[RMDB]
Annotation: This 207-nucleotide RNA was probed chemically with 2A3.
RNA sequence: GGGAACGACUCGAGUAGAGUCGAAAACUGACCAGGAGGUAAGGUGGGUGCAUGCCCACUCUGCUGAAUUCCAGAACUGUGGUGACUGUGAGGCAUGAACCUCAAAGUACUUACUAUUCAAAUAAGAAUGACCCUUCUCCACCAGGCACAGUGGCUACAUGGCCGAUUAGUUCGCUAAUCGGCCAUGAAAAGAAACAACAACAACAAC
Reactivity to 2A3 in 0.01 (KOAc 150mM, MgCl2 10mM, bicine 150mM(pH8.5), 24C), signal-to-noise 1, nucleotides 027 to 156: c020u100g070a000c040c030a030g010g000a030g010g010u130a060a060g080g080u070g040g050g000u070g110c040a090u220g000c020c000c010a000c030u040c010u040g050c000u020g030a030a080u150u000c070c010a010g100a170a070c090u030g000u020g130g120u040g110a040c050u000g030u000g040a130g020g000c000a090u070g030a150a010c000c000u010c010a040a040a000g010u040a040c080u160u070a010c000u110a080u100u090c040a170a200a210u300a180a030g220a010a010u060g050a060c010c000c000u060u030c060u020c020c000a090c020c000a010g000g000c040a050c000a130g020u040g000g170c010u170a040
Reactivities are given for positions 27 through 156. Conditions: 150 mM KOAc, 10 mM MgCl2 and 150 mM bicine (pH 8.5), 24 C.